RNA sequence: GGGAACGACUCGAGUAGAGUCGAAAAAGACUCUUCAUGGGGAAAAAAUGUGAUCGGUGUGACCUCCCCCUCACCUGUUGAGGCCAUGAGCUAUCGACUAGUUGACCCGAGCACCUGGGAGGAAGAGGUACAAGGGAACUUUCGAGUUCCCUUGUACAAAAGAAACAACAACAACAAC
Reactivity to DMS in 0.01 (KOAc 150mM, MgCl2 10mM, bicine 150mM(pH8.5), 24C), signal-to-noise 2, nucleotides 027 to 126: a140g020a220c010u020c020u000u000c040a070u020g000g000g000g000a040a010a100a060a080a060u000g010u010g000a050u000c060g010g000u000g010u000g000a120c050c030u000c010c010c010c010c070u000c000a060c060c080u030g010u000u000g000a070g000g040c030c030a110u020g000a140g020c010u000a110u000c050g000a000c060u010a060g000u020u000g000a110c040c010c000g000a050g000c070a060c030c040u000g000g000g000a080g000g000a060a030g010a110g000